Chemical mapping of a 177-nucleotide RNA with DMS and 2A3. For DMS the reverse transcriptase was MarathonRT. The data come from the RNA Mapping Database (RMDB), library OK1LIB.

RNA sequence: GGGAACGACUCGAGUAGAGUCGAAAAAAACAAAUACAACAACGUAUACUUUUACGAAUUAUGUAGAUCAAUACACAAAUGUUAGCGGUAGCUUUGAACAAGUCGCAUUUGCGAAACGUGAAAAUGCCGCGUAAGAUACCUUCGGGUAUCUUACGCGAAAAGAAACAACAACAACAAC
Reactivity to DMS in 0.01 (KOAc 150mM, MgCl2 10mM, bicine 150mM(pH8.5), 24C), signal-to-noise 1, nucleotides 027 to 126: a040a000a020c140a000a070a150u050a000c230a050a000c190a030a160c060g000u000a000u000a300c080u040u070u000u000a000c040g000a140a030u070u010a110u040g000u000a000g000a030u000c210a220a000u000a070c000a030c300a000a140a000u030g000u000u040a070g000c030g000g000u010a000g000c010u000u020u000g000a160a000c050a000a250g000u000c050g010c040a300u000u000u000g000c000g000a020a040a050c190g000u000g050a120a000a000a000u010g000c040
Reactivity to 2A3 in 0.01 (KOAc 150mM, MgCl2 10mM, bicine 150mM(pH8.5), 24C), signal-to-noise 2, nucleotides 027 to 126: a010a000a000c230a060a230a030u210a040c100a080a000c110a140a000c060g010u000a010u020a140c100u000u000u190u160a030c060g080a110a060u300u000a000u040g090u050a050g110a150u300c150a000a000u100a150c000a000c000a000a240a000u210g000u010u100a040g000c080g040g000u000a010g000c050u180u080u300g030a110a020c000a100a100g140u280c150g020c010a050u050u020u300g010c040g060a150a000a000c080g000u000g000a000a000a250a000u090g000c020
For DMS, 1,008 sequencing reads were counted.